[RMDB]
RNA sequence: GGGAACGACUCGAGUAGAGUCGAAAAAGUGGCAUAAUGGAUCAUAUAGUAGAGUUUAUUUAAAUCAUGAAGUUAAUUUUAGACUGCAUUAAUUGAACUGCUGUGUCCCAAACAAAAAGGAUAAUCCUCCUUUGAUCUAUGUGGGUCACAUGACUCCCAUAUCUCCCGAUUUCGAUCGGGAGAUAUGAAAAGAAACAACAACAACAAC
Reactivity to 2A3 in 0.01 (KOAc 150mM, MgCl2 10mM, bicine 150mM(pH8.5), 24C), signal-to-noise 4, nucleotides 027 to 156: a000g060u040g020g010c020a030u030a080a050u140g030g010a020u040c030a020u150a050u100a160g030u050a040g040a020g040u020u080u080a050u090u100u070a040a090a050u100c080a050u070g060a040a020g020u040u070a080a100u140u090u070u110a060g050a040c020u020g010c010a020u040u090a120a070u110u160g030a100a030c020u050g020c010u020g020u010g050u090c000c010c040a010a040a020c030a030a060a030a000a000g020g000a020u080a120a100u140c030c000u020c000c010u040u010u050g020a030u010c030u060a060u080g120u080g090g010g000u030c000a020c000a040u110g040a040c040u020c070c010
Reactivity to DMS in 0.01 (KOAc 150mM, MgCl2 10mM, bicine 150mM(pH8.5), 24C), signal-to-noise 2, nucleotides 027 to 156: a070g020u000g010g030c000a110u000a110a090u000g010g000a070u000c020a080u000a080u010a090g010u000a080g010a090g000u010u000u010a020u010u000u000a060a050a080u000c040a060u010g000a030a030g020u000u000a040a080u010u000u010u000a140g030a040c030u010g020c030a070u010u000a060a070u000u000g000a060a090c030u000g010c020u000g050u000g000u000c000c020c030a080a080a110c120a040a070a030a090a030g000g000a140u010a070a100u010c120c090u000c010c030u000u000u010g000a040u000c060u000a070u000g020u000g000g010g050u010c010a060c050a050u000g010a030c030u010c000c030
The record gives the reactivity of an RNA of 207 nucleotides to 2A3 and DMS. For DMS, 5,401 sequencing reads were counted. DMS adducts were read by reverse transcription with MarathonRT. 2A3 adducts were read by reverse transcription with SuperScript II with manganese. The reactions ran in a buffer of 150 mM KOAc, 10 mM MgCl2 and 150 mM bicine (pH 8.5), at 24 C. For 2A3, 2,308 sequencing reads were counted.